Conditions: 150 mM KOAc, 10 mM MgCl2 and 150 mM bicine (pH 8.5), 24 C. The record gives the reactivity of an RNA of 177 nucleotides to 2A3 and DMS. High DMS reactivity at an A or C suggests that its Watson-Crick edge is free. For DMS, 3,340 sequencing reads were counted. The data come from the RNA Mapping Database (RMDB), library M2PK90.
[RMDB]
RNA sequence: GGGAACGACUCGAGUAGAGUCGAAAAAAAGUUAGCGAACUAGAGUCGCCGUGAGUACGCUAUGGUUCCGUGAGACUCUACUCGAGCGUAUCACGGAACCCACGUACAUACCGUACGUGCUAUAAAAGCAGCAUAUGUUAUUCGUAACAUAUGCUGCAAAAGAAACAACAACAACAAC
Reactivity to 2A3 in 0.01 (KOAc 150mM, MgCl2 10mM, bicine 150mM(pH8.5), 24C), signal-to-noise 3, nucleotides 027 to 126: a000a000a000g150u060u040a010g010c010g010a000a000c000u010a020g000a010g130u080c020g010c040c000g040u030g010a010g040u040a020c040g000c020u020a030u050g030g000u040u020c160c040g000u010g010a060g000a000c010u000c000u000a010c000u000c000g000a000g000c010g000u020a020u040c000a000c000g010g010a020a030c000c000c000a010c000g010u000a000c000a060u140a190c030c080g000u010a000c010g010u010g010c030u100a140u090a210a120a020a030
Reactivity to DMS in 0.01 (KOAc 150mM, MgCl2 10mM, bicine 150mM(pH8.5), 24C), signal-to-noise 3, nucleotides 027 to 126: a040a060a090g000u000u010a070g000c020g010a040a010c020u000a050g010a040g000u000c010g000c040c020g020u020g000a080g000u000a030c000g010c020u000a040u010g010g000u000u000c050c080g030u010g000a090g010a010c010u000c000u000a030c000u000c020g010a010g010c030g030u000a070u000c020a030c010g000g000a130a040c020c050c020a010c000g010u000a000c000a110u020a130c280c250g010u010a010c010g010u000g000c080u000a070u000a030a050a120a110